Source: RMDB libraries RFM100 and RFMREP, as collected in RNAgym.
Structure probing data (DMS and 2A3) for a 177-nucleotide construct.
The RNA was probed in 150 mM KOAc, 10 mM MgCl2 and 150 mM bicine (pH 8.5) at 24 C.
[RMDB]
RNA sequence: GGGAACGACUCGAGUAGAGUCGAAAAGAAAGAAAGAAAGAGAGGUCAGCUGCUCUGACGAUGUUGCACUACUGUACCGUGCACUAAAGCAGUGCAAUAGUAUUGUCAUAGCAUCGGACCUUCGCAACUCCACUGUACGGUUCGCCGUACAGUGGAGAAAAGAAACAACAACAACAAC
Reactivity to DMS in 0.01 (KOAc 150mM, MgCl2 10mM, bicine 150mM(pH8.5), 24C), signal-to-noise 2, nucleotides 027 to 126: g000a030a060a070g030a090a070a160g010a070a050a090g000a080g010a010g000g000u040c000a030g020c160u000g000c010u000c010u000g020a010c010g000a060u010g000u000u000g000c020a010c010u000a010c010u020g000u000a150c120c110g000u000g010c070a030c120u010a100a120a060g030c010a000g030u010g000c000a000a030u020a120g020u060a020u000u040g010u000c020a000u000a050g000c070a000u000c000g030g000a090c000c000u000u060c060g010c150a090a120
Reactivity to 2A3 in 0.01 (KOAc 150mM, MgCl2 10mM, bicine 150mM(pH8.5), 24C), signal-to-noise 4, nucleotides 027 to 126: g150a020a080a020g140a040a110a000g120a060a090a000g130a000g010a000g000g000u010c000a020g010c010u000g000c000u020c040u000g000a000c010g000a020u040g020u050u010g000c000a000c000u040a010c020u050g040u130a060c030c100g130u150g080c090a080c090u180a100a070a020g000c000a000g000u000g000c000a000a010u040a020g160u080a070u080u080g000u000c000a000u000a020g000c000a000u000c010g010g000a000c000c000u040u010c020g000c010a030a030

For DMS the reverse transcriptase was MarathonRT.